[RMDB]
RNA sequence: GGGAACGACUCGAGUAGAGUCGAAAAUGGGGCUGCUCUGGAAGCGUGGAAGAGAGGAAGUGCGGUGAUGCCUUCAGCCUACCAGGGACUAUUAUUGUUAUUGCCUGUUACUAUUAUUGCCUUCUCCCCAUGAAGACACCGUCACAAAGCUACCUUAUAUCAUCCAUGAUUUCGAUCAUGGAUGAUAAAAAGAAACAACAACAACAAC
Reactivity to 2A3 in 0.01 (KOAc 150mM, MgCl2 10mM, bicine 150mM(pH8.5), 24C), signal-to-noise 5, nucleotides 027 to 156: u060g000g010g000g000c030u040g020c010u050c010u030g050g020a100a040g030c090g060u080g030g050a100a020g060a020g020a030g050g040a090a030g070u050g070c040g000g050u050g030a040u090g040c010c000u020u030c010a030g010c020c020u040a080c010c020a010g020g020g010a040c030u020a040u270u030a090u060u100g070u100u060a070u110u120g040c000c010u040g050u140u060a070c070u030a040u270u020a080u100u140g030c010c000u070u050c030u050c000c010c000c000a030u060g020a010a020g030a030c030a010c020c030g100u130c030a010c040a100a050a000g030c030u070a060c010c010u070u060a120
Reactivity to DMS in 0.01 (KOAc 150mM, MgCl2 10mM, bicine 150mM(pH8.5), 24C), signal-to-noise 3, nucleotides 027 to 156: u020g030g010g050g040c040u010g030c050u010c040u000g020g010a100a080g000c040g020u010g020g020a070a080g030a180g020a100g020g000a080a100g020u000g000c050g040g000u000g000a070u010g000c010c030u010u000c030a110g000c030c020u000a110c060c070a100g030g010g010a100c080u000a120u010u000a100u000u010g020u000u000a050u010u000g000c010c020u010g010u000u000a080c070u000a080u010u000a070u000u000g010c010c030u000u000c030u000c020c000c030c030a080u000g010a020a040g020a040c000a070c060c010g010u010c030a060c060a040a080a120g010c040u000a100c040c010u000u000a240